[RMDB]
RNA sequence: GGGAACGACUCGAGUAGAGUCGAAAACAUUCAAAAUAUUUGGAGCGGAAUAACAACAUUCUUCACUACCUUAUGGACGACUGUUAUUGGUGGUAUUCAAUCUGUAUGGGGCGGAGUAACUGACUUUUUUAGUGGAAUAUUCGACGCAGUUAGUUCAGUGUAUUCAAAGCUUCGGCUUUGAAUACACAAAAGAAACAACAACAACAAC
Reactivity to 2A3 in 0.01 (KOAc 150mM, MgCl2 10mM, bicine 150mM(pH8.5), 24C), signal-to-noise 1, nucleotides 027 to 156: c030a020u150u290c020a050a050a060a020u070a140u070u050u130g030g000a060g000c030g090g000a000a020u160a100a030c100a020a030c050a090u120u100c050u060u120c080a100c090u190a220c030c000u200u230a090u200g040g010a030c000g000a000c020u040g040u280u020a080u020u070g020g010u000g010g000u010a030u000u100c040a020a040u020c010u030g050u020a100u090g000g000g030g000c030g000g050a000g000u010a030a030c010u000g050a040c060u160u000u140u000u130u140a030g000u040g040g020a060a020u050a070u070u110c000g000a000c050g000c070a000g000u020u110a020g000u040u030c050a000